[RMDB]
RNA sequence: GGGAACGACUCGAGUAGAGUCGAAAAGAUUAUUGCCAUAUCUUCUUCUUUCAUACCUCUAGUAGUUACAGCUGGAGUACCAAGUCUUAUUCCACUUGUAAUAAGAGCACCAUUUGGGUCAAAUGGAGCGGAUGGAUUACUUCGGUAAUCCAUCCGCAAAAGAAACAACAACAACAAC
Reactivity to 2A3 in 0.01 (KOAc 150mM, MgCl2 10mM, bicine 150mM(pH8.5), 24C), signal-to-noise 1, nucleotides 027 to 126: g030a030u250u240a110u200u170g070c040c040a110u050a090u150c010u000u060c010u060u010c000u000u080u050c010a080u040a120c000c010u000c000u040a120g060u050a030g000u060u170a100c000a060g060c110u000g010g010a050g000u000a000c000c020a000a160g030u000c000u000u010a000u000u000c000c000a010c060u080u020g050u050a010a010u030a080a050g030a050g000c050a090c030c040a030u000u000u100g140g010g000u050c080a000a000a180u020g000g000a010

Structure probing data (2A3) for a 177-nucleotide construct. For 2A3 the reverse transcriptase was SuperScript II with manganese. Conditions: 150 mM KOAc, 10 mM MgCl2 and 150 mM bicine (pH 8.5), 24 C.